Structure probing data (2A3 and DMS) for a 177-nucleotide construct.
[RMDB]
RNA sequence: GGGAACGACUCGAGUAGAGUCGAAAAGAUAUGGACAAUCUCAGCAGAGAUAGUCACACCGAAGAACUUUAUCGGAAACGAUAAAGGGAGGUGAAGUCUAUCGACGAAGCUGAGAUUGUCCUAAGUCGUAUAUCGUUUUCUUCGGAAAACGAUAUACAAAAGAAACAACAACAACAAC
Reactivity to 2A3 in 0.01 (KOAc 150mM, MgCl2 10mM, bicine 150mM(pH8.5), 24C), signal-to-noise 2, nucleotides 027 to 126: g080a030u220a100u280g010g030a000c000a020a000u000c010u000c020a000g000c000a000g060a000g000a060u050a010g020u000c030a020c010a000c150c000g200a300a090g000a090a030c000u000u020u010a000u020c000g050g030a150a020a090c000g000a000u030a010a000a000g030g010g010a040g000g040u020g050a170a040g050u020c010u010a000u000c040g300a300c090g110a230a020g010c000u000g000a000g000a000u000u000g000u000c000c000u000a000a000g020u000c000
Reactivity to DMS in 0.01 (KOAc 150mM, MgCl2 10mM, bicine 150mM(pH8.5), 24C), signal-to-noise 4, nucleotides 027 to 126: g010a110u000a300u000g000g000a000c000a000a000u000c000u000c000a010g040c010a110g000a180g000a010u010a020g000u000c030a300c020a020c000c010g000a130a240g000a160a230c000u000u000u000a000u000c000g000g000a110a130a240c000g010a000u020a000a010a020g000g010g010a050g000g040u000g000a100a130g000u000c000u000a010u000c010g000a260c270g000a140a090g010c000u000g000a010g010a000u000u000g000u000c000c000u000a010a060g000u010c180
The RNA was probed in 150 mM KOAc, 10 mM MgCl2 and 150 mM bicine (pH 8.5) at 24 C. Source: RMDB library TTRINS, as collected in RNAgym.